This 207-nucleotide RNA was probed chemically with 2A3. The RNA was probed in 150 mM KOAc, 10 mM MgCl2 and 150 mM bicine (pH 8.5) at 24 C. Values cover nucleotides 27 to 156. It was measured as part of the RMDB library ARCHII.
RNA sequence: GGGAACGACUCGAGUAGAGUCGAAAACAGGUUGCCUAAGGAGGGGUGAACCGGCCCAGGUCGGAAACGGAGCAGGUCAAAACUCCCGUGCUGAUCAGUAGUGGGAUCGCGCCUGUGAAUAGCCACUGCACUCCAGCCUGGGCAACAUAGCGAGACCGGCAAAUUAGUAGUUCGCUACUAAUUUGCCAAAAGAAACAACAACAACAAC
Reactivity to 2A3 in 0.01 (KOAc 150mM, MgCl2 10mM, bicine 150mM(pH8.5), 24C), signal-to-noise 2, nucleotides 027 to 156: c030a020g010g070u000u000g010c010c010u130a110a060g040g010a000g000g030g000g010u040g040a060a060c020c030g000g040c000c020c020a020g030g010u070c020g000g060a050a060a130c080g000g020a090g010c060a010g000g040u130c040a020a080a040a120c040u000c020c000c010g020u040g000c030u060g030a260u160c120a030g070u070a030g080u060g010g010g030a050u020c030g010c010g010c110c020u040g000u020g030a060a080u120a060g040c000c030a060c040u110g010c020a000c000u000c010c010a030g030c010c010u000g000g000g000c000a010a000c000a010u030a000g070c090g040a020g010a080c050c030